[RMDB]
Chemical mapping of a 177-nucleotide RNA with 2A3 and DMS. For DMS the reverse transcriptase was MarathonRT. Source: RMDB library TTRDES, as collected in RNAgym.
RNA sequence: GGGAACGACUCGAGUAGAGUCGAAAAGAUAUGGACCAUGUGUGGACAUGCAACUGAUCGGAAACGAUCAGUUUGCAACAGCCACCAUGGUCCUAAGUCAAAACGUCGAGUGUUCGCACUCGACGAACACGUUAUCUAGGUUCGCCUAGAUAACGUGAAAAGAAACAACAACAACAAC
Reactivity to 2A3 in 0.01 (KOAc 150mM, MgCl2 10mM, bicine 150mM(pH8.5), 24C), signal-to-noise 5, nucleotides 027 to 126: g000a010u010a000u050g000g000a000c010c000a010u010g300u120g010u010g060g020a070c140a300u130g000c010a000a000c010u000g000a010u000c000g000g010a000a010a010c000g000a000u010c010a000g000u020u010u060g000c000a030a030c130a030g000c000c000a000c000c000a000u000g000g000u010c000c000u000a000a000g000u000c000a000a000a070a090c020g000u010c000g000a000g000u010g060u150u200c300g070c110a000c000u000c020g000a000c000g000a010a010
Reactivity to DMS in 0.01 (KOAc 150mM, MgCl2 10mM, bicine 150mM(pH8.5), 24C), signal-to-noise 5, nucleotides 027 to 126: g000a010u000a030u000g000g000a020c010c000a010u000g010u010g030u000g010g000a040c120a080u020g010c000a010a010c000u000g010a010u000c000g020g000a020a010a020c000g010a010u000c000a000g010u000u010u010g030c000a080a040c150a190g000c000c000a010c000c000a000u000g000g000u000c000c000u000a000a050g000u000c010a110a070a120a220c020g030u000c000g000a020g020u000g010u000u010c270g030c010a020c010u000c000g000a000c000g010a040a130